[RMDB]
RNA sequence: GGGAACGACUCGAGUAGAGUCGAAAAACAUCGGUUUCGACCGAUGUAAAAAAACCUUUGUGGUGUGGUGGGAGCUUAGGUACGUCCCAUUGGGACGGGCUAAGCGACGAUCACCAUUAUCCACUCUGGUAAAAACGAAGUCAUUCGUGACUUCGAAAGGCUAUUUUACGUUCGCGUAAAAUAGCCUAAAAGAAACAACAACAACAAC
Reactivity to 2A3 in 0.01 (KOAc 150mM, MgCl2 10mM, bicine 150mM(pH8.5), 24C), signal-to-noise 1, nucleotides 027 to 156: a000c000a000u000c000g010g080u090u040u090c100g140a000c000c000g010a000u000g000u000a000a000a000a000a000a000a000c000c010u000u000u000g020u000g030g000u010g010u000g010g020u000g000g000g000a010g000c000u010u000a040g050g090u200a180c020g000u020c040c010c060a130u100u300g000g000g000a000c000g000g010g000c000u000a000a030g000c010g030a030c000g000a000u010c000a000c000c000a000u150u160a030u050c000c000a000c000u000c000u000g050g000u100a190a160a010a000a000c030g000a000a000g000u000c010a010u000u270c300g070u040g010a000c000u000u000c010g000a180a060